[RMDB]
RNA sequence: GGGAACGACUCGAGUAGAGUCGAAAAAAGUCAUUGAUGCAAACUCCUUGGUCACACACACAUACGGCGCGGAAGGCGUGUUUGCUGACGUUUCCAUUCCCUUGUUUCAAUCAUUGGUUAAUCCCUUUACGUAGUACUCGUUCGCGAGUACUACGUAAAAAGAAACAACAACAACAAC
Reactivity to 2A3 in 0.01 (KOAc 150mM, MgCl2 10mM, bicine 150mM(pH8.5), 24C), signal-to-noise 3, nucleotides 027 to 126: a020a010g040u030c010a010u060u100g050a000u080g030c040a000a000a030c020u010c000c000u030u020g020g040u080c010a070c000a010c000a000c000a010c000a110u110a180c060g030g010c020g030c050g110g090a070a010g030g000c040g050u090g050u050u000u010g010c040u020g000a010c010g010u010u070u040c000c000a010u020u020c000c000c020u010u040g030u020u020u010c070a080a080u070c040a050u030u080g010g020u050u110a110a040u050c000c010c000u000u000
Reactivity to DMS in 0.01 (KOAc 150mM, MgCl2 10mM, bicine 150mM(pH8.5), 24C), signal-to-noise 2, nucleotides 027 to 126: a010a030g020u030c070a100u000u020g000a060u000g000c110a040a050a130c010u000c020c020u010u000g000g010u000c030a040c030a090c110a080c090a010c090a010u000a050c170g010g030c050g040c080g010g030a030a060g010g000c300g020u030g010u010u000u000g000c000u000g020a180c180g010u000u000u010c030c000a220u030u000c000c010c000u000u000g010u010u000u000c010a070a080u000c100a100u000u000g030g020u000u000a080a070u000c030c000c000u010u010
Structure probing data (2A3 and DMS) for a 177-nucleotide construct.
The data come from the RNA Mapping Database (RMDB), libraries RFM100 and RFMREP.
The reactions ran in a buffer of 150 mM KOAc, 10 mM MgCl2 and 150 mM bicine (pH 8.5), at 24 C.